Annotation: An RNA of 177 nucleotides, treated with DMS and 2A3 and read out base by base. For DMS the reverse transcriptase was MarathonRT. Reactivities are given for positions 27 through 126. 2A3 adducts were read by reverse transcription with SuperScript II with manganese. For 2A3, 4,324 sequencing reads were counted.
RNA sequence: GGGAACGACUCGAGUAGAGUCGAAAAUUAAAGCACAUGAAGCACGCGAAGCACGGCAAGCAGUACAAGCACUACAAGCAGUACAAGCAGCGCAAGCAGUAGAAGCAGCCGAAGCUCAUGAAAAAAAUCGAUUAAUUAGAUUCGUCUAAUUAAUCGAAAAAGAAACAACAACAACAAC
Reactivity to DMS in 0.01 (KOAc 150mM, MgCl2 10mM, bicine 150mM(pH8.5), 24C), signal-to-noise 4, nucleotides 027 to 126: u000u020a060a090a100g000c100a070c090a080u000g010a060a090g020c030a070c080g010c070g000a100a110g000c030a110c090g010g000c030a050a080g010c050a090g010u000a030c060a070a120g010c040a040c090u010a070c190a060a080g010c030a070g010u010a020c050a040a110g010c030a050g010c030g010c080a050a090g000c020a040g020u010a050g000a110a070g000c040a050g000c040c040g010a060a060g010c020u000c080a050u020g000a000a000a040a100a040a060a100
Reactivity to 2A3 in 0.01 (KOAc 150mM, MgCl2 10mM, bicine 150mM(pH8.5), 24C), signal-to-noise 3, nucleotides 027 to 126: u090u050a070a030a000g050c010a020c020a090u080g040a050a020g010c030a010c060g050c030g060a080a020g040c030a020c050g030g000c020a020a060g010c010a010g020u040a030c020a050a120g020c010a010c070u170a040c040a080a060g050c000a000g010u010a020c000a090a010g000c020a010g040c020g000c040a020a020g000c010a000g000u070a030g040a100a000g000c020a000g020c010c010g030a060a010g010c020u030c030a040u150g030a110a010a000a000a010a000a060